Background
Source: RMDB library OK2TST, as collected in RNAgym. The record gives the reactivity of an RNA of 177 nucleotides to 2A3 and DMS. For 2A3, 1,657 sequencing reads were counted.
RNA sequence: GGGAACGACUCGAGUAGAGUCGAAAAUGCCACCGAAACGGCGAAGCGGCUCCCUGCCCAAAUAGAUAUUCUCCGCCACGGUCAUAUGGGGAACGGGGCUUAGCUCCUGUUCGAUGAUCGCGAUACAUACCUCAUGCAUGUUCGCAUGCAUGAGGUAAAAAGAAACAACAACAACAAC
Reactivity to 2A3 in 0.01 (KOAc 150mM, MgCl2 10mM, bicine 150mM(pH8.5), 24C), signal-to-noise 2, nucleotides 027 to 126: u060g020c010c010a000c000c060g050a120a080a030c060g000g010c000g010a050a010g080c040g030g000c020u010c020c000c000u000g050c030c000c030a080a090a010u150a060g120a040u070a050u160u110c050u040c040c030g000c030c010a040c010g000g020u020c010a010u100a110u250g160g000g050g010a010a010c050g010g000g000g040c020u080u120a050g030c020u080c010c000u030g000u000u000c020g010a010u030g010a010u030c010g000c020g020a020u020a170c020a020
Reactivity to DMS in 0.01 (KOAc 150mM, MgCl2 10mM, bicine 150mM(pH8.5), 24C), signal-to-noise 2, nucleotides 027 to 126: u000g010c020c020a120c040c060g010a080a140a140c160g030g000c020g040a180a100g030c040g000g010c010u000c000c020c010u010g000c020c010c020a080a100a040u010a060g010a120u010a090u030u000c050u010c030c030g000c110c020a070c020g010g010u010c020a000u000a070u010g010g010g010g020a010a050c030g010g000g010g010c010u000u020a140g030c020u020c010c000u000g020u000u000c000g010a080u000g000a040u000c010g000c040g020a150u000a080c170a200
Reactivities are given for positions 27 through 126.